[RMDB]
RNA sequence: GGGAACGACUCGAGUAGAGUCGAAAACUAGAACGUCGAUGAUUUUCUCCUUGGCGUCACGCGGCAUCUUGUCUAGGAGCCUCUCGGCUAGGAUGAGGGCCUCUACCUCGUCAGGCCUCACGGCAUAACGUGACUCCUUUUUCGAAAGGAGUCACGUAAAAGAAACAACAACAACAAC
Reactivity to DMS in 0.01 (KOAc 150mM, MgCl2 10mM, bicine 150mM(pH8.5), 24C), signal-to-noise 1, nucleotides 027 to 126: c090u010a010g000a100a090c160g040u020c040g020a120u020g010a100u000u010u000u000c210u000c090c050u000u000g000g000c000g000u030c060a080c060g030c100g030g010c140a060u000c020u000u010g010u010c020u000a170g000g020a090g020c030c060u000c140u000c190g000g000c030u000a070g000g000a040u000g000a100g000g000g000c080c020u000c180u000a120c090c010u000c010g000u000c020a080g000g030c070c040u000c070a100c120g020g040c060a080u000a190
Reactivity to 2A3 in 0.01 (KOAc 150mM, MgCl2 10mM, bicine 150mM(pH8.5), 24C), signal-to-noise 1, nucleotides 027 to 126: c030u040a050g040a130a080c040g000u020c020g120a200u150g070a070u140u010u230u010c030u020c050c000u030u080g050g000c000g000u020c030a010c100g020c060g060g040c000a110u000c000u110u100g000u000c030u060a040g070g100a000g090c000c030u150c050u060c110g000g000c000u000a020g070g060a020u040g030a040g010g000g040c000c000u010c030u040a080c050c000u030c020g050u010c020a000g020g070c010c000u050c000a050c040g000g000c000a020u020a130
Source: RMDB library OK2TST, as collected in RNAgym.
This 177-nucleotide RNA was probed chemically with DMS and 2A3.
2A3 adducts were read by reverse transcription with SuperScript II with manganese.
Values are in units of 0.01, from 0 to 300, in steps of 10.
For DMS the reverse transcriptase was MarathonRT.
The 2A3 profile rests on 1,079 reads.